[RMDB]
RNA sequence: GGGAACGACUCGAGUAGAGUCGAAAAAAUAAUUGGCGAAACUCGUUUCGCGUUGGCUGCCUAAUUCAAGGAAUUAGCGUGCCUCCAUGCUAAGGGUUUGAUAUCUGCUAAAACCCGGUGCAUUCAUAAGACUUUUGCUUGUUCGCAAGCAAAAGAAGUUAAGCGUAAUCUUCGGAUUACGCUUAACAAAAGAAACAACAACAACAAC
Reactivity to DMS in 0.01 (KOAc 150mM, MgCl2 10mM, bicine 150mM(pH8.5), 24C), signal-to-noise 2, nucleotides 027 to 156: a120a100u000a050a170u000u000g020g000c010g000a200a130a040c040u010c130g040u000u000u000c050g020c010g000u020u020g030g020c020u000g000c130c000u000a040a030u000u000c020a170a160g040g000a020a060u010u000a020g030c090g000u000g020c000c010u010c030c030a080u000g010c010u010a300a240g010g010g010u000u000u000g000a170u010a060u010c060u000g020c110u000a130a000a030a070c000c000c000g000g010u000g020c010a070u000u000c040a130u010a100a150g010a110c010u000u000u000u010g000c000u000u000g030u000u000c300g040c000a000a020g040c000a010a000a000a010g020a030a080
Reactivity to 2A3 in 0.01 (KOAc 150mM, MgCl2 10mM, bicine 150mM(pH8.5), 24C), signal-to-noise 4, nucleotides 027 to 156: a010a000u300a020a040u080u070g040g000c000g010a050a030a010c020u000c050g030u000u020u000c040g000c020g010u030u070g000g000c040u070g020c040c010u010a020a020u020u010c130a180a120g190g020a090a010u000u000a010g010c030g040u020g000c010c010u000c000c010a020u010g000c000u020a020a030g000g010g000u020u010u010g050a030u050a130u220c150u170g070c060u110a010a030a040a020c010c000c000g000g000u020g000c020a010u040u170c030a040u090a210a140g060a110c000u010u010u010u000g000c000u010u000g020u030u010c100g000c110a000a000g000c010a000a010a000a000g020a010a000